Chemical mapping of a 177-nucleotide RNA with DMS. DMS adducts were read by reverse transcription with MarathonRT. The data come from the RNA Mapping Database (RMDB), library OK2TST.
[RMDB]
RNA sequence: GGGAACGACUCGAGUAGAGUCGAAAAGUACAGACUGCUAUUGAAAUGCCAAAAGUUGCAGAACCUUUUAUAAAAAGAAGAGCUCAAAGACAUCUUGAAAAAGGUAGAGUAGUUAUAUUUGGAGCUAUAGGGUAAAUCAUUUCGAUGAUUUACCCUAAAAAGAAACAACAACAACAAC
Reactivity to DMS in 0.01 (KOAc 150mM, MgCl2 10mM, bicine 150mM(pH8.5), 24C), signal-to-noise 1, nucleotides 027 to 126: g000u010a090c120a140g050a170c040u000g000c000u030a090u010u000g000a060a100a110u000g020c080c010a060a020a080a080g010u040u000g000c010a100g000a100a050c050c000u020u000u010u020a160u040a110a030a100a090a050g010a070a070g000a100g000c040u000c050a060a070a110g020a160c040a050u000c020u000u000g000a020a080a060a020a070g000g000u000a110g030a100g010u000a050g000u000u000a080u000a040u000u000u010g000g000a040g000c090u010a100